[RMDB]
RNA sequence: GGGAACGACUCGAGUAGAGUCGAAAAAAUGAGAUGCCGUGGACCCGCGGGAGAACCGCUCGAACACCACUUGGCGCUCACCUUCGGGCACUCCGCUGCCGUUGUCGUCGAUGGCGAUCUCCACGCCCAACAACUUCGUGUUCGCACGAAGUUGUUGAAAAGAAACAACAACAACAAC
Reactivity to DMS in 0.01 (KOAc 150mM, MgCl2 10mM, bicine 150mM(pH8.5), 24C), signal-to-noise 2, nucleotides 027 to 126: a060a110u000g010a060g020a030u000g000c030c020g080u000g010g000a070c040c040c100g020c000g010g010g000a110g000a110a160c120c030g030c020u000c060g000a040a070c140a160c080c030a080c140u000u000g030g030c000g000c060u020c070a060c110c060u000u000c030g030g020g000c060a120c120u020c080c200g000c040u000g000c020c030g000u000u000g000u020c070g020u000c020g000a030u010g000g000c030g010a100u030c060u000c020c140a160c110g040c000c020

Background:
This 177-nucleotide RNA was probed chemically with DMS. The reactions ran in a buffer of 150 mM KOAc, 10 mM MgCl2 and 150 mM bicine (pH 8.5), at 24 C. The DMS profile rests on 1,259 reads.